[RMDB]
Structure probing data (DMS and 2A3) for a 177-nucleotide construct. The DMS profile rests on 1,724 reads. The RNA was probed in 150 mM KOAc, 10 mM MgCl2 and 150 mM bicine (pH 8.5) at 24 C. DMS adducts were read by reverse transcription with MarathonRT. For 2A3 the reverse transcriptase was SuperScript II with manganese.
RNA sequence: GGGAACGACUCGAGUAGAGUCGAAAAGAGGGGGCCGAGUGAGGCUUAUCCCGGGGAUCGGCGUCGCCCCCACAUAGCAGACCCCGGGUCCCCUUCCGAACGAGGGGGACGGUCCUUGGACCUCAGGGUAUUAAGAUCACUUCGGUGAUCUUAAUACAAAAGAAACAACAACAACAAC
Reactivity to DMS in 0.01 (KOAc 150mM, MgCl2 10mM, bicine 150mM(pH8.5), 24C), signal-to-noise 2, nucleotides 027 to 126: g000a120g010g020g000g010g000c030c050g000a060g010u010g010a100g020g020c020u000u010a080u010c080c010c000g000g000g020g000a110u020c010g000g010c030g000u000c080g020c030c010c000c000c000a060c130a090u000a130g020c030a070g000a020c000c030c000c010g000g000g000u000c000c000c000c000u010u000c010c120g000a180a300c170g000a030g010g020g000g000g000a010c130g000g000u000c010c020u010u020g000g000a110c010c010u010c030a140g010g010
Reactivity to 2A3 in 0.01 (KOAc 150mM, MgCl2 10mM, bicine 150mM(pH8.5), 24C), signal-to-noise 1, nucleotides 027 to 126: g090a040g030g020g000g010g000c020c010g010a010g030u110g040a050g060g000c030u020u070a080u120c000c000c000g020g010g010g000a260u020c000g000g020c020g060u050c030g070c000c010c010c030c000a020c010a020u200a000g070c030a010g010a010c000c000c000c000g010g010g000u010c000c000c000c010u040u000c000c020g090a080a080c050g000a020g000g000g000g010g000a000c000g000g020u020c000c030u030u040g140g010a170c000c010u040c030a050g090g010